RNA sequence: GGGAACGACUCGAGUAGAGUCGAAAAGAAAAGCACGAUGCUAAGCAUUUUACCUUUAUUAUCUGGUUUAAACUAUUAUUAUCCUAAUUUUGCAGAUGAGGAAACUGAGGCACAAAUAAUUUAAUAACUUGUCCAAAUUACAAGGACAGUAUGUAGAAGUAAUUUAGGUAUUCGUACCUAAAUUACUAAAAGAAACAACAACAACAAC
Reactivity to 2A3 in 0.01 (KOAc 150mM, MgCl2 10mM, bicine 150mM(pH8.5), 24C), signal-to-noise 3, nucleotides 027 to 156: g050a010a060a010a000g050c040a030c090g060a030u090g020c050u060a070a040g000c010a030u030u030u020u200a110c030c000u120u070u050a160u040u060a080u120c030u050g060g000u060u030u050a050a050a020c030u050a090u300u010a130u100u020a040u120c000c000u040a110a180u060u080u080u080g000c000a010g000a040u060g000a050g020g000a030a010a010c070u050g000a040g040g000c030a000c000a030a040a010u040a030a020u170u120u160a120a120u130a030a050c020u060u070g000u000c000c000a000a080a220u120u090a210c070a180a000g000g000a000c010a000g020u050a040u180g060u050a020g030a150
Reactivity to DMS in 0.01 (KOAc 150mM, MgCl2 10mM, bicine 150mM(pH8.5), 24C), signal-to-noise 2, nucleotides 027 to 156: g040a060a020a050a100g010c030a040c120g000a090u000g020c050u010a100a250g010c010a100u000u010u010u010a080c020c010u000u000u000a140u030u010a070u000c030u020g000g000u000u000u000a060a050a090c010u000a080u000u000a070u000u010a110u010c050c010u030a050a080u000u000u000u000g030c030a070g010a060u000g000a070g030g010a070a090a070c100u000g020a070g050g010c010a110c050a010a060a100u010a060a120u000u000u000a050a030u010a100a110c030u010u000g020u000c030c000a070a120a100u000u010a080c140a070a180g020g010a020c040a030g030u000a030u000g050u000a060g000a150